[RMDB]
The data come from the RNA Mapping Database (RMDB), library OK3TST. An RNA of 207 nucleotides, treated with 2A3 and DMS and read out base by base. The reactions ran in a buffer of 150 mM KOAc, 10 mM MgCl2 and 150 mM bicine (pH 8.5), at 24 C. DMS adducts were read by reverse transcription with MarathonRT. As a SHAPE reagent, 2A3 marks flexible, mostly unpaired nucleotides at the ribose 2'-OH.
RNA sequence: GGGAACGACUCGAGUAGAGUCGAAAAUAAUUCGUUUAUCUAUGACCUUAUCAGGCAUCCAGUGUUUAAAAUCAUCAAACUUUCAAUUGAUAAUUGUUAAGUCAAGGUACAACAAGCGAUUAGGACACAAGAGGAAUGCAGCUGAGGAAGAACUAGAAUGAUUAACGACUUUCGAGUCGUUAAUCAUAAAAGAAACAACAACAACAAC
Reactivity to 2A3 in 0.01 (KOAc 150mM, MgCl2 10mM, bicine 150mM(pH8.5), 24C), signal-to-noise 3, nucleotides 027 to 156: u100a000a100u080u080c030g060u040u050u060a140u050c040u040a170u130g110a080c020c010u050u030a030u070c050a040g030g000c030a010u080c080c010a020g010u040g020u070u070u090a090a140a030a030u090c040a020u020c020a100a110a090c020u040u190u020c040a040a100u000u100g060a040u130a260a060u080u000g080u060u070a010a040g000u010c090a090a040g080g040u090a110c040a140a020c010a080a050g020c020g060a040u000u090a080g050g010a010c010a000c020a120a080g060a030g040g030a070a000u030g000c000a030g030c000u050g020a010g020g050a070a030g020a060a000c020u040a030g070a180
Reactivity to DMS in 0.01 (KOAc 150mM, MgCl2 10mM, bicine 150mM(pH8.5), 24C), signal-to-noise 1, nucleotides 027 to 156: u010a090a160u020u000c040g010u010u000u010a050u000c020u020a090u010g000a130c030c030u010u000a080u000c020a090g050g010c120a020u010c030c080a140g010u020g020u010u020u010a050a070a050a050u000c050a060u020c070a030a070a050c020u000u010u020c050a060a020u010u000g030a120u000a090a120u000u000g030u010u010a060a100g060u000c020a080a060g000g040u000a090c020a040a050c010a020a050g040c050g020a050u000u000a160g020g000a040c030a110c070a070a160g020a190g020g000a020a050u000g000c020a060g020c030u000g000a050g020g050a070a090g010a050a090c040u020a060g010a070